Structure probing data (2A3 and DMS) for a 177-nucleotide construct. For DMS, 3,181 sequencing reads were counted. DMS adducts were read by reverse transcription with MarathonRT. Values cover nucleotides 27 to 126. The reactions ran in a buffer of 150 mM KOAc, 10 mM MgCl2 and 150 mM bicine (pH 8.5), at 24 C. It was measured as part of the RMDB library TTRDEL.

RNA sequence: GGGAACGACUCGAGUAGAGUCGAAAAGAUAUGGAACAGGCAGCGUCGCUAGGCGUUGAAAUCGGAAACGAUGGAGCCUAAAAGUCGCUGCUGUUCCUAAGUCAAAAGCCAUCGUUCGCGAUGGCAAUCUACGGUAUGUGUUCGCACAUACCGUAGAAAAAGAAACAACAACAACAAC
Reactivity to 2A3 in 0.01 (KOAc 150mM, MgCl2 10mM, bicine 150mM(pH8.5), 24C), signal-to-noise 3, nucleotides 027 to 126: g030a010u100a030u150g010g010a030a010c020a040g300g000c000a000g010c010g010u020c010g050c180u010a010g010g000c050g180u290u050g000a040a030a010u000c000g010g070a060a030a030c010g000a000u020g040g030a000g000c000c000u080a110a120a010a060g010u020c000g000c010u000g000c010u000g000u020u000c000c000u000a030a010g030u000c010a060a010a050a130g000c000c000a000u010c010g050u080u090c300g000c010g120a000u000g000g000c000a000a010
Reactivity to DMS in 0.01 (KOAc 150mM, MgCl2 10mM, bicine 150mM(pH8.5), 24C), signal-to-noise 3, nucleotides 027 to 126: g000a050u000a300u000g000g010a010a020c020a020g010g020c000a020g010c000g020u000c010g020c240u000a010g010g020c000g030u010u040g010a040a160a020u010c000g010g000a160a100a140c030g000a000u000g000g010a100g020c000c000u010a000a040a090a130g010u010c000g010c000u000g020c010u000g000u000u000c000c000u000a030a090g000u020c030a070a060a110a090g010c000c000a000u000c000g010u010u000c230g030c010g010a010u000g000g000c000a000a010